[RMDB]
Source: RMDB libraries RFM100 and RFMREP, as collected in RNAgym. Chemical mapping of a 177-nucleotide RNA with DMS and 2A3. Values cover nucleotides 27 to 126. The reactions ran in a buffer of 150 mM KOAc, 10 mM MgCl2 and 150 mM bicine (pH 8.5), at 24 C. DMS adducts were read by reverse transcription with MarathonRT.
RNA sequence: GGGAACGACUCGAGUAGAGUCGAAAAAUAGUAUACCAGGGCGAGAGAUGAAAUGCCAAGACCCCUGGUGGACUGAGCGAGGCGAAGGCGAUGUUCUUGUAGGCAUUCGGUGAUCAAGGACGAAGGCGUGUUAGGACGUAUUCGUACGUCCUAACACAAAAGAAACAACAACAACAAC
Reactivity to DMS in 0.01 (KOAc 150mM, MgCl2 10mM, bicine 150mM(pH8.5), 24C), signal-to-noise 4, nucleotides 027 to 126: a090u010a030g000u000a100u030a010c030c000a030g020g000g020c040g010a130g020a070g010a150u000g010a100a090a040u040g010c010c010a080a130g020a300c300c010c000c000u000g000g010u000g000g010a040c040u010g000a080g010c080g000a070g010g000c040g000a040a060g000g020c040g000a090u020g010u010u000c030u030u000g020u000a040g010g000c020a040u010u000c070g010g010u020g010a060u020c060a050a080g010g000a040c030g000a100a040g020g000c100
Reactivity to 2A3 in 0.01 (KOAc 150mM, MgCl2 10mM, bicine 150mM(pH8.5), 24C), signal-to-noise 6, nucleotides 027 to 126: a000u210a010g020u010a020u010a030c000c000a010g000g000g000c090g020a080g010a020g010a160u140g140a110a070a050u160g070c030c000a020a040g070a090c000c000c000c000u000g000g000u010g000g000a020c030u040g030a020g060c070g030a030g040g000c040g030a040a000g030g000c040g010a060u090g010u050u020c010u030u030g050u050a050g030g020c020a020u070u040c060g070g020u080g020a040u090c040a040a030g030g010a000c030g040a060a010g060g040c070